[RMDB]
RNA sequence: GGGAACGACUCGAGUAGAGUCGAAAAAUAGGUAGCAGUUGCAUUAGCAUGUUUUCCUUACAUGUAAGGCAUCACCGAUCCGCUGCAUGAUAUGUGGUGAUAAUAUGUUAUUUAGCCUCUUGAAUACCCUACCAACUUAUUUCGAUAAGUUGGUAGGAAAAGAAACAACAACAACAAC
Reactivity to DMS in 0.01 (KOAc 150mM, MgCl2 10mM, bicine 150mM(pH8.5), 24C), signal-to-noise 7, nucleotides 027 to 126: a100u000a060g020g010u000a050g010c050a060g000u000u000g020c030a050u000u000a090g010c010a020u000g000u000u000u010u010c060c030u000u010a050c050a060u010g010u000a070a070g000g010c050a020u010c020a030c040c070g000a050u000c050c110g010c100u010g010c100a080u000g010a050u000a240u010g010u000g010g020u000g010a070u000a030a050u000a030u000g000u000u000a040u000u000u000a160g010c020c020u000c080u000u000g010a080a120u000a090c160
Reactivity to 2A3 in 0.01 (KOAc 150mM, MgCl2 10mM, bicine 150mM(pH8.5), 24C), signal-to-noise 6, nucleotides 027 to 126: a000u100a020g050g030u020a020g010c030a030g030u090u090g000c010a040u090u020a020g040c010a020u000g050u000u040u040u080c030c000u030u060a030c020a060u080g020u070a020a030g030g000c010a020u030c010a010c020c050g010a020u020c020c040g050c110u090g030c050a100u090g060a040u080a030u130g070u040g000g030u010g070a000u030a070a030u090a050u060g050u050u020a060u040u080u020a030g010c000c010u050c030u040u040g050a080a040u110a150c000
Structure probing data (DMS and 2A3) for a 177-nucleotide construct.
For 2A3, 10,331 sequencing reads were counted.
The RNA was probed in 150 mM KOAc, 10 mM MgCl2 and 150 mM bicine (pH 8.5) at 24 C.
The data come from the RNA Mapping Database (RMDB), library OK2TRN.
The DMS profile rests on 11,272 reads.